This 207-nucleotide RNA was probed chemically with 2A3.
The RNA was probed in 150 mM KOAc, 10 mM MgCl2 and 150 mM bicine (pH 8.5) at 24 C.
RNA sequence: GGGAACGACUCGAGUAGAGUCGAAAAACUGACGGUAAGCCGUCAGAACGGUAGAAAAGAUGGUUUGAAAACCACGCCUUCUACCAAUAUAGUAAAUAAAUAGGCGGAGCGGUCAUACGUGACCGCAAAAACAUAUUCAGCUUCGGCUGAAUAUGAACUGUGAACUAACCUUCGGGUUAGUUCACAGAAAAGAAACAACAACAACAAC
Reactivity to 2A3 in 0.01 (KOAc 150mM, MgCl2 10mM, bicine 150mM(pH8.5), 24C), signal-to-noise 1, nucleotides 027 to 156: a020c010u000g000a000c000g020g000u010a150a000g220c000c000g000u000c000a000g010a060a020c060g000g000u000a000g020a030a000a000a020g170a300u010g010g110u000u110u180g170a150a120a000a020c000c000a000c000g000c000c010u000u000c000u000a000c000c000a010a000u120a040u010a040g050u070a000a000a130u040a100a060a020u140a040g020g000c020g000g000a010g000c000g000g010u010c020a030u010a110c300g090u020g000a000c010c000g000c000a010a000a010a000a010c000a000u040a000u000u040c000a000g000c000u010u030c200g140g000c000u000g000a000a000u000a000u000g000a000a070